[RMDB]
RNA sequence: GGGAACGACUCGAGUAGAGUCGAAAAGAUAUGGAAGAGCUAUCAACUCCCCACCCGUAGUAAUCGGAAACGAUUACACGGAGGUGACCACGGCUCUUCCUAAGUCAAAGUACCCUUCGGGGUACAACAUACGAAAAGGCUUCGGCCUUUUCGUAUGAAAAGAAACAACAACAACAAC
Reactivity to 2A3 in 0.01 (KOAc 150mM, MgCl2 10mM, bicine 150mM(pH8.5), 24C), signal-to-noise 1, nucleotides 027 to 126: g010a040u110a050u180g000g030a000a010g010a000g000c020u060a080u300c070a090a090c070u070c000c020c000c030a080c050c020c010g020u170a250g000u000a080a030u000c010g000g010a060a030a070c000g000a000u000u000a000c000a000c000g000g000a030g030g000u090g000a020c010c080a030c140g050g000c010u000c000u010u000c000c000u010a050a010g020u010c060a060a080a180g010u010a010c000c000c000u010u010c290g130g000g000g000u000a000c000a000a020
Reactivity to DMS in 0.01 (KOAc 150mM, MgCl2 10mM, bicine 150mM(pH8.5), 24C), signal-to-noise 2, nucleotides 027 to 126: g000a030u000a300u000g000g000a000a010g010a010g000c000u000a030u000c190a090a200c300u000c020c030c000c010a190c150c000c010g000u010a080g020u000a010a000u000c000g030g000a070a040a140c030g010a010u000u000a000c000a000c010g010g000a060g000g030u000g000a050c150c170a110c220g000g000c030u000c000u000u010c000c010u000a000a090g010u000c030a030a160a140g010u000a000c000c000c000u000u010c120g060g000g010g010u000a000c000a040a080